[RMDB]
RNA sequence: GGGAACGACUCGAGUAGAGUCGAAAAAGGGGAGUUCGCUCCCCUCAUGGGAUAUGGACGAUCCUACCCACCGACAAACUUCCGUUGAUCUCGGAAACGAGGGAGGAAGUCUUGUCGAGGGAUCGUCCUAAGUCAUCGGCCUCAAUUCGUUGAGGAAAAACACUCUGGAUUUCGAUCCAGAGUGUUUAAAAGAAACAACAACAACAAC
Reactivity to DMS in 0.01 (KOAc 150mM, MgCl2 10mM, bicine 150mM(pH8.5), 24C), signal-to-noise 1, nucleotides 027 to 156: a010g000g000g020g040a070g010u000u000c260g040c000u000c000c000c000c030u010c020a010u010g010g000g010a060u000a230u010g010g030a030c010g020a020u000c020c010u000a060c020c020c020a300c180c000g010a030c000a030a040a020c000u010u000c010c000g000u020u010g000a020u000c030u000c020g020g020a160a030a170c010g010a060g000g020g010a010g010g010a020a020g010u000c070u000u000g080u000c030g000a110g050g010g000a000u000c000g010u000c000c000u020a000a040g010u000c040a080u010c030g060g000c000c010u000c000a040a150u000u020c290g020u000u010g000a020g030g000a030a030
Reactivity to 2A3 in 0.01 (KOAc 150mM, MgCl2 10mM, bicine 150mM(pH8.5), 24C), signal-to-noise 1, nucleotides 027 to 156: a040g040g000g010g030a000g010u100u110c140g120c120u010c000c000c000c000u000c000a090u070g000g000g040a070u070a070u150g040g000a020c000g000a000u000c010c010u050a300c040c000c030a000c000c000g000a000c000a000a000a000c000u000u040c000c000g260u290u030g020a020u000c000u020c010g030g050a110a120a100c020g000a010g040g000g000a010g000g000a000a000g010u000c170u010u010g010u000c010g000a000g000g000g000a000u000c020g020u000c010c000u000a010a010g030u020c010a100u150c140g090g000c000c000u000c000a000a020u080u120c290g150u140u050g000a010g000g000a210a030
Overview:
The record gives the reactivity of an RNA of 207 nucleotides to DMS and 2A3. 2A3 adducts were read by reverse transcription with SuperScript II with manganese. The reactions ran in a buffer of 150 mM KOAc, 10 mM MgCl2 and 150 mM bicine (pH 8.5), at 24 C. The data come from the RNA Mapping Database (RMDB), library RNAMAK.